Conditions: 150 mM KOAc, 10 mM MgCl2 and 150 mM bicine (pH 8.5), 24 C. The record gives the reactivity of an RNA of 177 nucleotides to DMS and 2A3. High DMS reactivity at an A or C suggests that its Watson-Crick edge is free.
RNA sequence: GGGAACGACUCGAGUAGAGUCGAAAAGAUAUGGACGCCGUGAGCGAUAAGAUAGCGGUCGGAAACGACCGAUUAUCUUUUGACGCUCGGGGUCCUAAGUCAAAAGUGUUGCGUUCGCGCAACACAACUUGUGUAGGUGGUUCGCCACCUACACAAGAAAAGAAACAACAACAACAAC
Reactivity to DMS in 0.01 (KOAc 150mM, MgCl2 10mM, bicine 150mM(pH8.5), 24C), signal-to-noise 2, nucleotides 027 to 126: g000a030u000a300u010g010g000a050c000g020c010c000g000u000g050a010g030c010g010a160u010a020a030g000a000u000a010g010c000g000g010u000c010g000g010a070a070a140c000g000a000c010c000g010a010u000u000a000u000c000u000u010u000u000g000a170c100g000c000u000c000g010g010g020g020u010c010c000u000a010a080g000u000c020a070a050a170a120g020u000g010u000u000g000c000g010u000u010c280g020c000g020c020a010a010c000a000c000a020a060
Reactivity to 2A3 in 0.01 (KOAc 150mM, MgCl2 10mM, bicine 150mM(pH8.5), 24C), signal-to-noise 1, nucleotides 027 to 126: g000a010u020a020u090g000g000a020c120g220c290c040g250u230g160a010g000c020g070a090u000a300a090g000a000u020a000g000c000g000g000u000c000g000g000a070a030a010c000g000a000c000c000g020a000u020u000a000u020c010u030u000u050u130g120a030c000g010c000u000c030g000g000g000g000u000c000c020u010a120a000g060u000c030a070a040a150a080g020u020g000u000u010g000c020g040u040u100c300g000c000g000c090a000a000c000a000c000a010a010
For DMS, 1,556 sequencing reads were counted. For DMS the reverse transcriptase was MarathonRT.